[RMDB]
RNA sequence: GGGAACGACUCGAGUAGAGUCGAAAAGAGUGGAUGUUCCGCCUCCCCAGGGUCCCGAGUGAGGCUUAUCCCGGGGAACUCGGCCCAGUCCCGAGAUGGCCGCGUCCGAGGUUCCCAUUCAAAGGGGCAACCCUAUGCUUCGGCAUAGGGAAAAGAAACAACAACAACAAC
Reactivity to DMS in 0.01 (KOAc 150mM, MgCl2 10mM, bicine 150mM(pH8.5), 24C), signal-to-noise 8, nucleotides 027 to 129: g030a060g020u030g020g020a080u040g030u060u020c050c060g000c040c000u000c000c000c000c000a130g000g000g000u020c070c000c000g000a120g000u010g010a110g020g000c080u010u040a040u000c030c010c010g020g000g000g030a030a010c020u000c020g000g010c010c010c030a140g010u040c040c030c020g010a090g000a090u020g000g020c030c040g020c140g000u000c010c010g020a060g010g020u030u010c010c010c010a040u060u040c100a040a080a060g020g010g020g020c140a100a110
Reactivity to 2A3 in 0.01 (KOAc 150mM, MgCl2 10mM, bicine 150mM(pH8.5), 24C), signal-to-noise 9, nucleotides 027 to 129: g170a020g030u110g010g050a100u130g090u210u080c020c020g010c010c010u030c010c000c000c020a030g060g010g010u040c000c010c010g010a040g050u130g020a050g020g000c010u020u100a050u040c000c000c010g010g000g000g020a030a020c020u020c040g030g000c000c010c030a040g060u080c000c010c020g070a080g020a090u080g020g000c010c010g040c050g030u000c020c010g010a020g000g050u040u040c010c010c010a010u120u140c070a020a050a020g010g000g000g000c010a030a070